Chemical mapping of a 177-nucleotide RNA with DMS and 2A3. Source: RMDB library OK2TST, as collected in RNAgym.
RNA sequence: GGGAACGACUCGAGUAGAGUCGAAAAGUUUUCCAGCAUCUCCAUGGAGCCAUGGUCUCUGAUUCCUGGAGCAUGUCGUAGUCGGUUCAGGCUGCUGUAACAAAGUAUCAUCUGCUGAGAGGCUCACGCAUACCCAUCCAUUCGUGGAUGGGUAUGCAAAAGAAACAACAACAACAAC
Reactivity to DMS in 0.01 (KOAc 150mM, MgCl2 10mM, bicine 150mM(pH8.5), 24C), signal-to-noise 2, nucleotides 027 to 126: g020u000u000u020u000c000c000a200g020c050a020u000c010u000c010c010a060u000g020g010a030g010c040c010a060u010g020g000u000c030u000c040u010g000a100u000u000c020c000u010g010g020a030g000c130a050u000g000u010c090g030u000a030g020u000c030g000g000u010u010c120a110g010g000c040u000g010c040u000g000u010a080a100c120a070a110a110g010u000a090u000c090a060u000c080u000g000c060u010g010a100g000a060g010g000c020u000c130a090c170
Reactivity to 2A3 in 0.01 (KOAc 150mM, MgCl2 10mM, bicine 150mM(pH8.5), 24C), signal-to-noise 2, nucleotides 027 to 126: g010u020u020u100u040c000c000a000g000c000a030u040c000u040c000c030a050u260g000g000a030g020c030c020a090u110g100g010u060c060u050c020u080g060a070u030u030c000c000u020g000g010a000g000c060a070u050g020u010c040g040u010a020g020u000c060g000g140u100u100c050a050g030g000c010u020g040c020u080g080u120a040a050c050a080a130a020g020u050a080u160c040a030u040c060u140g010c020u040g060a020g010a020g100g000c000u030c040a030c070